[RMDB]
RNA sequence: GGGAACGACUCGAGUAGAGUCGAAAAGAUAUGGACGUACCGCCCCUUUCGGUAUAGGGAGCGAUGUGAUCGGAAACGAUCAUUUCGCAUCGAUCUAUACCGAAAGGUAACAUGUACGUCCUAAGUCCGUCCGUUAACUGUUCGCAGUUAACGGACGAAAAGAAACAACAACAACAAC
Reactivity to 2A3 in 0.01 (KOAc 150mM, MgCl2 10mM, bicine 150mM(pH8.5), 24C), signal-to-noise 1, nucleotides 027 to 126: g120a020u160a120u200g020g000a010c010g030u010a000c010c040g130c030c000c020c000u030u000u010c030g000g030u020a010u020a040g020g000g010a070g030c000g000a010u000g000u030g000a000u000c010g060g010a080a030a010c000g010a010u000c020a000u020u020u020c000g040c060a160u300c030g020a040u000c000u030a000u000a000c000c000g020a000a000a000g030g000u000a000a000c020a030u270g000u040a000c010g000u000c000c010u000a090a010g040u180c000
Reactivity to DMS in 0.01 (KOAc 150mM, MgCl2 10mM, bicine 150mM(pH8.5), 24C), signal-to-noise 1, nucleotides 027 to 126: g030a100u000a300u030g000g060a020c000g030u000a010c040c300g040c280c300c000c010u010u010u010c000g010g000u000a000u000a000g000g000g000a050g000c000g010a010u000g010u030g000a000u010c000g010g020a100a270a260c000g000a000u000c020a020u000u000u000c000g010c000a300u000c230g000a040u000c000u000a010u000a000c000c000g010a000a010a040g020g000u010a000a100c120a160u000g000u000a010c020g000u010c000c010u010a020a100g000u010c030